[RMDB]
RNA sequence: GGGAACGACUCGAGUAGAGUCGAAAAGAUAUGGAUCCACUGGUGAAGGUCGAAGAACAAGAUCGGAAACGAUCUUGGGAGACCCACUUGGAUCCUAAGUCAAAACACAGUAACUUCGGUUACUGUGCAAGCUUUCAAGGUUCGCCUUGAAAGCUUGAAAAGAAACAACAACAACAAC
Reactivity to 2A3 in 0.01 (KOAc 150mM, MgCl2 10mM, bicine 150mM(pH8.5), 24C), signal-to-noise 2, nucleotides 027 to 126: g010a010u050a020u170g000g020a010u040c020c020a000c240u160g010g100u160g210a300a300g080g000u000c010g220a300a030g000a040a020c010a010a010g000a020u020c020g000g010a050a050a010c000g000a000u000c020u000u010g010g010g020a010g020a000c000c040c010a000c020u030u040g000g000a010u000c000c010u000a070a030g030u020c050a020a070a210a030c000a000c000a010g010u010a000a000c000u090u170c300g200g000u010u010a000c000u000g020u000g000
Reactivity to DMS in 0.01 (KOAc 150mM, MgCl2 10mM, bicine 150mM(pH8.5), 24C), signal-to-noise 3, nucleotides 027 to 126: g000a030u000a300u020g000g010a000u010c000c020a040c300u010g020g020u000g020a200a160g030g030u000c020g000a100a130g030a120a270c010a000a020g010a020u010c000g040g020a110a080a170c020g010a000u000c020u000u000g000g000g000a100g000a020c010c020c010a000c050u000u010g010g000a030u000c000c000u000a010a070g040u000c020a110a080a110a240c010a000c020a010g010u000a010a000c000u000u000c210g030g010u000u000a000c000u000g000u000g010
Structure probing data (2A3 and DMS) for a 177-nucleotide construct.
The DMS profile rests on 1,749 reads.
For 2A3, 3,066 sequencing reads were counted.
Reactivities are given for positions 27 through 126.